[RMDB]
RNA sequence: GGGAACGACUCGAGUAGAGUCGAAAAGUCUCAGAAAUGGUGGACGCCCCUCCCCCCAUCAGGCUGCAGCCUCGCAGGUUGAUCUCAGACUGCUGCGCUAGCAGUGAGCAAGGCUCUGUGGGCGUGUGACCCACUAAGCCAGGCACGGGAGGGAAUCGCAUUCAAUAUCUUUCGAGAUAUUGAAUGCAAAAGAAACAACAACAACAAC
Reactivity to 2A3 in 0.01 (KOAc 150mM, MgCl2 10mM, bicine 150mM(pH8.5), 24C), signal-to-noise 5, nucleotides 027 to 156: g030u010c010u010c050a030g110a050a190a040u060g020g020u040g020g000a030c040g050c010c020c000c010u010c000c000c000c010c000c010a000u020c000a000g030g000c000u000g000c000a010g010c000c030u050c070g020c020a020g040g080u080u140g140a240u070c120u070c170a070g040a170c000u010g020c010u010g000c020g010c060u060a090g000c000a010g000u010g040a020g010c030a070a090g000g000c000u040c040u050g010u010g030g010g000c080g100u170g100u160g140a290c000c000c000a010c000u010a020a000g010c010c000a000g010g000c080a030c100g010g020g000a030g020g010g010a000a030u090c080
Reactivity to DMS in 0.01 (KOAc 150mM, MgCl2 10mM, bicine 150mM(pH8.5), 24C), signal-to-noise 2, nucleotides 027 to 156: g000u010c010u000c020a110g000a100a070a070u000g010g000u000g020g010a090c020g020c050c000c020c010u000c010c000c000c030c010c020a060u000c040a090g020g020c020u040g020c020a070g010c000c010u030c230g000c050a040g000g010u000u000g010a190u000c120u000c030a110g020a050c000u000g020c000u010g040c150g000c060u000a110g010c020a060g000u000g010a130g040c080a090a230g000g040c000u000c020u000g020u010g020g010g010c030g040u000g030u000g020a080c000c000c000a010c000u010a010a020g030c000c010a060g020g000c030a100c090g010g000g000a070g050g010g020a030a030u010c090